[RMDB]
Chemical mapping of a 207-nucleotide RNA with DMS and 2A3. The reactions ran in a buffer of 150 mM KOAc, 10 mM MgCl2 and 150 mM bicine (pH 8.5), at 24 C. In probing experiments dimethyl sulfate is read out at A N1 and C N3, which are open when not base-paired.
RNA sequence: GGGAACGACUCGAGUAGAGUCGAAAAGUCCAAAAUUGAUUCGGCGGCCCUGUCAUGAGGCCGAAACGAAGGCACGUACCCCUUCGAAUGGCGUCAGGGAGUCAGCGGCUAUAUAUGCGCCUAAUGCUAAAGUCGUGCUGGUUCGCCAGCACGACAACAUUAUCGCAUACUUCGGUAUGCGAUAAUGAAAAGAAACAACAACAACAAC
Reactivity to DMS in 0.01 (KOAc 150mM, MgCl2 10mM, bicine 150mM(pH8.5), 24C), signal-to-noise 2, nucleotides 027 to 156: g010u000c030c030a070a110a120a130u000u010g000a190u000u000c010g020g000c030g050g000c020c010c020u000g000u000c150a150u000g010a090g010g030c010c020g010a020a060a190c050g030a070a030g030g050c050a170c130g000u000a130c090c040c010c040u000u000c030g050a070a130u000g000g020c010g030u000c030a070g000g030g000a180g020u000c040a090g010c040g030g000c040u000a100u000a110u000a060u010g000c020g000c020c000u030a050a130u000g000c020u020a050a070a160g030u010c010g080u000g010c000u010g010g020u000u000c300g000c000c000a010g030c000a010c010g020a010c000a010a080
Reactivity to 2A3 in 0.01 (KOAc 150mM, MgCl2 10mM, bicine 150mM(pH8.5), 24C), signal-to-noise 4, nucleotides 027 to 156: g070u000c020c000a050a040a040a080u170u170g010a030u050u060c030g010g000c010g010g040c020c000c000u000g030u030c030a070u050g040a030g090g000c000c010g030a010a000a000c010g000a010a010g010g020c120a010c170g180u210a120c030c000c010c000u000u000c010g040a050a080u160g010g010c040g180u020c010a010g040g120g050a050g130u050c020a010g030c050g070g000c020u010a010u020a020u010a020u300g070c000g020c020c020u070a070a050u080g070c040u130a170a040a030g010u000c000g000u000g000c000u000g010g030u050u040c080g060c060c000a000g000c000a000c010g000a000c000a000a000